[RMDB]
RNA sequence: GGGAACGACUCGAGUAGAGUCGAAAACAGUAUGCCUUCGGGCAUACUGAAACCAGAGGGUAUCUGGCCCACGCUCCCAUGCGUGCCGGGAAUCCCUUCCCAAAACGGAUGUCUUCGGACAUCCGAACUACCUAUGCGACUUCGGUCGCAUAGGUAGAAAAGAAACAACAACAACAAC
Reactivity to DMS in 0.01 (KOAc 150mM, MgCl2 10mM, bicine 150mM(pH8.5), 24C), signal-to-noise 1, nucleotides 027 to 126: c000a000g000u000a000u000g000c000c000u000u030c290g000g000g010c010a010u000a010c000u000g000a060a080a120c100c060a070g010a040g000g000g000u000a020u020c000u020g000g010c100c110c130a080c000g010c010u000c100c200c200a100u000g000c080g000u000g020c030c030g000g000g030a150a130u020c000c010c010u010u000c010c000c020a030a020a100a130c020g000g000a000u000g000u000c000u000u000c130g070g000a000c000a000u000c030c010g000a010a050
Reactivity to 2A3 in 0.01 (KOAc 150mM, MgCl2 10mM, bicine 150mM(pH8.5), 24C), signal-to-noise 1, nucleotides 027 to 126: c000a010g010u000a000u010g020c000c000u070u120c270g100g010g000c010a000u000a000c000u020g010a070a010a000c050c010a040g040a030g120g020g000u030a030u160c020u000g000g000c020c100c000a000c000g020c000u210c030c060c030a040u180g000c040g020u030g020c020c000g000g000g060a050a100u030c020c000c000u050u000c030c000c030a050a090a010a010c020g000g010a010u020g000u000c000u030u060c190g130g000a010c010a010u000c000c000g000a010a000